Background
Structure probing data (2A3 and DMS) for a 177-nucleotide construct. DMS (dimethyl sulfate) methylates the pairing face of unpaired adenines and cytosines. For 2A3, 2,217 sequencing reads were counted. The DMS profile rests on 2,077 reads. 2A3 adducts were read by reverse transcription with SuperScript II with manganese. The data come from the RNA Mapping Database (RMDB), library RFM100. The RNA was probed in 150 mM KOAc, 10 mM MgCl2 and 150 mM bicine (pH 8.5) at 24 C.

[RMDB]
RNA sequence: GGGAACGACUCGAGUAGAGUCGAAAAACAUGGUAGGUCCACUACGGUGGACCUACCAUGAAGAGGUAGGUGCGAGAAAUGACGGGCAUCGUGCAAAUCGUUCAUUGUCUCCCAGCUACUUCAACAACACAGACUAUAGCUUCGGCUAUAGUCUGUGAAAAGAAACAACAACAACAAC
Reactivity to 2A3 in 0.01 (KOAc 150mM, MgCl2 10mM, bicine 150mM(pH8.5), 24C), signal-to-noise 3, nucleotides 027 to 126: a000c000a000u010g000g000u010a000g000g010u000c000c020a020c000u010a010c200g090g010u000g000g000a000c000c000u010a010c000c010a010u000g000a000a010g000a000g000g000u000a000g010g120u060g020c030g010a000g030a020a010a020u000g010a000c020g010g060g050c040a140u200c280g080u160g050c020a090a090a120u110c020g120u140u050c100a010u010u110g300u160c010u000c020c030c000a000g070c000u000a000c000u010u010c010a030a010c050a030a000
Reactivity to DMS in 0.01 (KOAc 150mM, MgCl2 10mM, bicine 150mM(pH8.5), 24C), signal-to-noise 1, nucleotides 027 to 126: a160c000a000u070g000g020u000a010g000g050u000c000c000a030c000u000a020c240g010g000u010g030g000a000c000c000u000a040c000c000a040u000g000a050a080g000a020g000g000u000a000g000g010u010g000c300g020a010g000a100a030a010u000g000a070c060g000g000g020c030a190u050c150g000u120g000c020a000a180a080u010c010g010u010u000c000a000u000u000g000u010c000u000c000c070c000a000g030c010u000a000c000u000u000c080a040a050c110a020a140